[RMDB]
RNA sequence: GGGAACGACUCGAGUAGAGUCGAAAACGCUGGGCACGAUGGUAGCGAGCGUUGAAAUCCUGAAGCGCGCACGGGAUGGAGCUUAGCGAGAGUAGUGCCUGUGCUGAAGCGCGCACGGCAACCGAAAGGUGCGUUAAGUGUAGAUUCGUCUACACAAAUCGUUAUGGCUAUUCGUAGCCAUAACGAUAAAAGAAACAACAACAACAAC
Reactivity to DMS in 0.01 (KOAc 150mM, MgCl2 10mM, bicine 150mM(pH8.5), 24C), signal-to-noise 1, nucleotides 027 to 156: c000g000c000u020g000g040g050c010a020c020g030a140u000g000g000u000a210g060c020g010a020g000c000g020u010u000g010a060a150a060u000c000c000u000g000a100a020g030c000g010c020g010c010a300c110g000g000g000a110u000g000g000a240g000c020u000u000a090g020c030g000a260g020a250g030u000a120g000u010g020c000c000u020g070u000g020c020u000g040a030a050g020c010g010c060g000c020a300c070g020g000c020a080a060c020c010g000a060a080a130g030g010u010g000c060g010u000u000a120a120g020u000g030u000a020g000a040u000u040c300g020u000c010u000a000c020a000c020a040a050
Reactivity to 2A3 in 0.01 (KOAc 150mM, MgCl2 10mM, bicine 150mM(pH8.5), 24C), signal-to-noise 2, nucleotides 027 to 156: c010g010c010u020g010g000g000c000a000c010g120a140u060g150g030u050a000g010c000g020a000g000c010g100u170u140g070a080a050a000u000c000c000u010g050a190a070g000c000g000c000g030c010a030c020g030g000g000a010u000g040g060a030g010c030u030u070a150g010c060g000a050g010a020g050u220a010g000u000g000c000c010u000g000u000g000c010u030g030a120a040g030c000g000c000g010c000a020c040g000g000c000a010a010c020c020g000a080a010a010g020g000u010g000c000g010u030u090a150a070g010u000g000u000a010g010a030u000u120c280g090u030c090u000a010c000a000c020a020a160
The record gives the reactivity of an RNA of 207 nucleotides to DMS and 2A3. For DMS the reverse transcriptase was MarathonRT. For 2A3 the reverse transcriptase was SuperScript II with manganese.